Structure probing data (DMS and 2A3) for a 207-nucleotide construct.
2A3 adducts were read by reverse transcription with SuperScript II with manganese.
Values cover nucleotides 27 to 156.
The reactions ran in a buffer of 150 mM KOAc, 10 mM MgCl2 and 150 mM bicine (pH 8.5), at 24 C.
It was measured as part of the RMDB library RNAMAK.

[RMDB]
RNA sequence: GGGAACGACUCGAGUAGAGUCGAAAAGUAGCAAGUUCGCUUGCUACAAAAAACCGUAGGAAUAGGCGAAGAACAUGGUGAGAUAUAUUCGAAAGAGUAUAUGUAGCCAUGGGAGCCUUCUCCUAAACGGAAAAAGCGUUUACUUCGGUAAACGCAACUACAAGAUUUUCUUCGGAAAAUCUUGUAGAAAAGAAACAACAACAACAAC
Reactivity to DMS in 0.01 (KOAc 150mM, MgCl2 10mM, bicine 150mM(pH8.5), 24C), signal-to-noise 2, nucleotides 027 to 156: g000u000a000g010c000a000a020g020u000u000c300g060c020u000u000g010c020u020a020c010a010a020a050a080a010a080c000c010g070u020a070g010g020a090a170u000a030g000g070c010g020a130a210g030a070a100c000a000u000g010g050u010g000a300g000a030u000a010u000a000u000u000c000g020a220a190a210g000a020g060u010a000u000a010u000g020u000a300g000c000c000a030u000g000g000g020a300g020c000c010u000u000c040u010c010c000u000a020a010a100c020g000g000a040a060a190a130a150g000c000g000u000u000u000a010c000u000u020c300g060g000u000a010a000a010c000g030c000a000a010
Reactivity to 2A3 in 0.01 (KOAc 150mM, MgCl2 10mM, bicine 150mM(pH8.5), 24C), signal-to-noise 2, nucleotides 027 to 156: g000u010a010g020c000a000a000g020u040u050c230g060c150u000u000g000c000u000a010c000a000a010a010a020a010a010c030c000g010u030a020g030g010a030a030u040a100g020g000c060g140a280a030g010a050a030c010a010u010g000g020u070g000a100g080a030u010a000u010a000u010u010c010g050a080a070a080g000a020g010u010a000u010a000u000g020u040a000g000c020c000a000u000g000g000g000a010g000c010c000u010u010c030u000c000c000u050a210a130a030c020g010g070a030a040a040a150a020g000c010g010u010u010u000a010c000u020u090c300g090g000u000a000a000a000c000g000c000a000a000